[RMDB]
RNA sequence: GGGAACGACUCGAGUAGAGUCGAAAAAGAAAAAGGGGACAGGUGAUCCCCGACCUGCUCCGAACAUGCGCGCUCUGGGAGGAGGAGCGUCGCGGCCAGAAAACUGUACAUCAUUUUCGGCGCGAACGCCUGCUCAUGAUUUCGAUCAUGAGCAGGCAAAAGAAACAACAACAACAAC
Reactivity to DMS in 0.01 (KOAc 150mM, MgCl2 10mM, bicine 150mM(pH8.5), 24C), signal-to-noise 1, nucleotides 027 to 126: a010g010a060a080a010a210a160g010g000g000g010a050c000a040g020g000u000g000a030u030c000c000c030c000g000a000c000c000u000g000c030u000c020c020g020a150a110c300a160u020g050c000g060c050g000c030u030c010u030g000g000g060a150g000g020a160g000g000a000g000c000g060u000c020g000c000g010g020c000c000a200g030a000a000a020a000c160u030g020u030a140c280a210u120c040a150u020u000u040u000c000g020g000c020g000c090g000a100a030c100
Reactivity to 2A3 in 0.01 (KOAc 150mM, MgCl2 10mM, bicine 150mM(pH8.5), 24C), signal-to-noise 3, nucleotides 027 to 126: a000g170a040a090a020a030a020g000g020g010g000a030c000a000g040g040u010g060a170u030c030c000c000c000g000a010c000c000u000g000c020u000c000c000g000a030a020c060a060u110g020c000g020c000g020c020u000c000u060g080g020g020a050g080g030a020g030g000a010g000c000g000u040c090g000c000g040g040c000c030a030g010a010a010a020a000c080u110g050u300a180c030a240u250c030a050u090u000u020u010c010g000g020c000g000c020g080a060a010c050
Source information:
An RNA of 177 nucleotides, treated with DMS and 2A3 and read out base by base. Source: RMDB library OK1LIB, as collected in RNAgym. Values are in units of 0.01, from 0 to 300, in steps of 10. The RNA was probed in 150 mM KOAc, 10 mM MgCl2 and 150 mM bicine (pH 8.5) at 24 C. 2A3 adducts were read by reverse transcription with SuperScript II with manganese. For DMS the reverse transcriptase was MarathonRT.